[RMDB]
RNA sequence: GGGAACGACUCGAGUAGAGUCGAAAACAUUGAGAAGGAGAUCCUGGCUCUGCUCCCGCCCAAUAUUUUCUAUGGUGAUGCCUAUGAGGAGUCAGUGUUCUCUGCAGCCAUUUCCGGGGCUGGCCCCGAUUGUCCUCUGAUUCGUCAGAGGACAAUCAAAAGAAACAACAACAACAAC
Reactivity to DMS in 0.01 (KOAc 150mM, MgCl2 10mM, bicine 150mM(pH8.5), 24C), signal-to-noise 4, nucleotides 027 to 126: c100a100u010u000g010a120g020a110a170g000g000a020g000a030u000c050c000u000g000g000c010u000c010u000g000c100u010c040c060c070g000c040c020c060a050a070u010a070u010u010u010u010c130u000a110u000g010g000u010g010a080u010g010c060c130u000a080u010g010a160g010g000a030g010u000c010a020g000u000g010u000u000c010u000c000u000g000c030a030g010c010c010a070u000u000u000c050c040g000g000g000g010c020u000g010g010c010c010c010c070
Reactivity to 2A3 in 0.01 (KOAc 150mM, MgCl2 10mM, bicine 150mM(pH8.5), 24C), signal-to-noise 4, nucleotides 027 to 126: c040a060u170u300g080a120g040a260a100g020g000a040g000a010u010c010c000u000g010g000c000u020c020u020g070c100u050c030c010c010g000c020c020c010a080a020u090a130u120u220u100u060c110u050a110u150g000g050u050g060a130u120g050c030c040u180a180u300g080a050g020g000a000g010u010c010a010g000u010g040u260u010c010u000c000u010g000c000a000g000c000c010a040u080u080u040c040c020g070g000g010g000c020u000g020g020c010c000c010c000